RNA sequence: GGGAACGACUCGAGUAGAGUCGAAAAGGUCGGGACGAGGCUGCGUCGAUUUCAAUGCGACGCGUAAUAGCGCAAUGCGUCGUGGACGGAUUCGGGCGUGGGCAGGUGAUCCGUUUUCCAGACGAAAGGAUAAAUAGCUCUUCGGAGCUAUUUAUCCAAAAGAAACAACAACAACAAC
Reactivity to DMS in 0.01 (KOAc 150mM, MgCl2 10mM, bicine 150mM(pH8.5), 24C), signal-to-noise 3, nucleotides 027 to 126: g000g010u010c010g000g000g000a090c140g000a090g020g010c070u000g010c010g010u010c020g000a070u000u000u010c180a090a190u000g010c010g000a000c000g010c000g000u000a050a090u000a120g010c120g020c130a090a050u010g010c020g000u010c010g050u010g020g010a240c120g000g000a050u000u000c040g000g010g010c080g010u020g020g010g000c050a100g000g040u010g010a050u010c020c020g000u000u000u010u020c040c030a130g000a080c110g000a080a070a120
Reactivity to 2A3 in 0.01 (KOAc 150mM, MgCl2 10mM, bicine 150mM(pH8.5), 24C), signal-to-noise 2, nucleotides 027 to 126: g080g030u090c010g020g000g020a050c050g000a040g050g000c030u020g000c020g010u050c020g010a010u000u060u170c110a160a060u240g040c010g010a010c010g030c010g000u020a050a040u030a060g070c070g010c080a000a080u080g010c000g010u010c040g070u060g020g020a040c060g000g010a030u080u040c050g070g010g090c020g050u080g030g040g010c040a020g020g080u040g040a030u000c010c000g040u000u060u050u050c040c010a040g100a020c050g030a100a080a030